[RMDB]
RNA sequence: GGGAACGACUCGAGUAGAGUCGAAAAACAUGAAUGCUAUCGUUGGUUAGAACACCUGCAGCAAUGUCUGCAUCAAUCAUGCUCUGGCCGAUGAAAUGUCGCAUGAUGUCGAUCAGAUGGUGUGCAAGACUAUGAGCACCUUCGGGUGCUCAUAGUCAAAAGAAACAACAACAACAAC
Reactivity to 2A3 in 0.01 (KOAc 150mM, MgCl2 10mM, bicine 150mM(pH8.5), 24C), signal-to-noise 2, nucleotides 027 to 126: a000c080a040u100g100a150a040u050g060c020u040a000u080c010g040u000u100g000g020u020u040a010g000a030a010c040a020c040c010u020g060c010a010g020c020a070a300u230g020u030c010u030g010c040a000u080c020a050a080u060c040a070u080g010c010u000c000u030g030g000c030c000g030a040u030g110a060a080a130u240g050u140c050g000c020a000u070g000a050u020g090u030c040g000a100u010c000a030g040a060u030g060g050u070g020u010g050c060a130a000
Reactivity to DMS in 0.01 (KOAc 150mM, MgCl2 10mM, bicine 150mM(pH8.5), 24C), signal-to-noise 1, nucleotides 027 to 126: a060c040a060u000g010a070a110u000g010c030u020a230u000c080g000u010u000g000g000u000u010a000g000a050a030c040a010c210c110u010g000c010a020g030c030a100a110u000g020u020c020u020g010c020a000u020c090a080a090u000c150a130u000g030c070u000c040u000g000g000c000c030g010a000u000g030a030a110a120u000g010u000c080g000c020a010u000g000a130u020g000u020c040g000a040u000c080a080g010a110u000g000g050u000g020u000g000c060a100a160

Structure probing data (2A3 and DMS) for a 177-nucleotide construct. The RNA was probed in 150 mM KOAc, 10 mM MgCl2 and 150 mM bicine (pH 8.5) at 24 C. 2A3 adducts were read by reverse transcription with SuperScript II with manganese.